[RMDB]
An RNA of 207 nucleotides, treated with DMS and 2A3 and read out base by base. It was measured as part of the RMDB library M2RFPK. For 2A3, 781 sequencing reads were counted. The RNA was probed in 150 mM KOAc, 10 mM MgCl2 and 150 mM bicine (pH 8.5) at 24 C.
RNA sequence: GGGAACGACUCGAGUAGAGUCGAAAAGCCCAGAAGCCUCCCCUCAAAAUCGUUUCAGUCCAAAAUUGAUUCGGCGGUCCUGUCAUGAGGCCGAAACGAAGGCACGUACCCCUUCGAAUGGCGUCGGAACUUUCAGUCGUAUUCGUACGACUGAAAACUAAAAAUACAGAUUCGUCUGUAUUUUUAGAAAAGAAACAACAACAACAAC
Reactivity to DMS in 0.01 (KOAc 150mM, MgCl2 10mM, bicine 150mM(pH8.5), 24C), signal-to-noise 2, nucleotides 027 to 156: g020c010c000c030a160g000a120a180g000c020c000u000c030c040c020c000u000c040a060a070a140a110u000c030g020u000u000u010c050a090g040u020c030c060a070a070a170a160u010u010g000a080u000u000c060g000g050c050g030g000u000c010c030u000g020u000c030a110u010g020a100g000g010c000c010g000a040a050a070c010g000a040a030g040g020c040a100c070g010u010a180c030c060c010c000u000u010c030g000a110a150u000g010g000c070g010u000c020g010g010a070a070c100u000u000u000c000a010g000u000c000g020u000a050u000u010c240g040u000a010c000g010a050c000u000g000a000a000a020a220
Reactivity to 2A3 in 0.01 (KOAc 150mM, MgCl2 10mM, bicine 150mM(pH8.5), 24C), signal-to-noise 1, nucleotides 027 to 156: g030c010c030c030a060g190a120a050g050c000c000u060c050c050c020c000u040c020a060a080a030a060u060c020g000u010u030u030c060a050g030u060c070c010a110a020a080a060u090u080g010a060u010u090c020g020g000c010g020g040u000c010c000u060g030u050c060a060u060g000a040g090g000c000c000g030a000a000a000c010g000a000a000g080g000c100a020c170g100u170a080c010c020c030c010u000u000c020g050a030a050u060g010g000c010g050u030c030g000g000a050a060c040u020u020u010c000a000g000u000c000g010u000a020u040u030c130g040u030a000c000g000a010c000u000g000a000a000a000a000